An RNA of 207 nucleotides, treated with 2A3 and read out base by base. Reactivities are given for positions 27 through 156. For 2A3 the reverse transcriptase was SuperScript II with manganese. The reactions ran in a buffer of 150 mM KOAc, 10 mM MgCl2 and 150 mM bicine (pH 8.5), at 24 C. 2A3 is a SHAPE reagent: it acylates the 2'-hydroxyl of flexible nucleotides of all four kinds.
RNA sequence: GGGAACGACUCGAGUAGAGUCGAAAAGAUGGGUCCGAUGGAUUAAUGCGUCGCCCGCCAUUGGAUCCUGAUUGAUAGAUUGAGGGCGACGGUCGGAUCACUCGGUAAUUCGGUGCUCUACGAGUGAUCCGUGAUGAUAGUUAAGAUGAGCACCUAACGCUACGUAUUAGUUCGCUAAUACGUAGCGAAAAGAAACAACAACAACAAC
Reactivity to 2A3 in 0.01 (KOAc 150mM, MgCl2 10mM, bicine 150mM(pH8.5), 24C), signal-to-noise 3, nucleotides 027 to 156: g060a030u110g000g010g000u000c010c010g000a000u000g010g030a030u090u270a160a050u300g140c000g000u000c000g030c000c010c000g000c000c000a010u010u000g000g000a000u000c000c010u090g040a090u100u150g090a050u010a190g170a080u020u220g120a100g010g020g000c000g000a000c000g000g020u050c010g000g000a000u000c000a000c000u000c000g040g080u170a090a080u140u100c100g020g000u000g000c000u010c020u000a010c010g000a000g010u000g000a000u000c000c000g020u000g010a020u070g010a020u070a140g150u220u220a140a050g070a170u150g000a000g010c030a000c000c000u000a010a020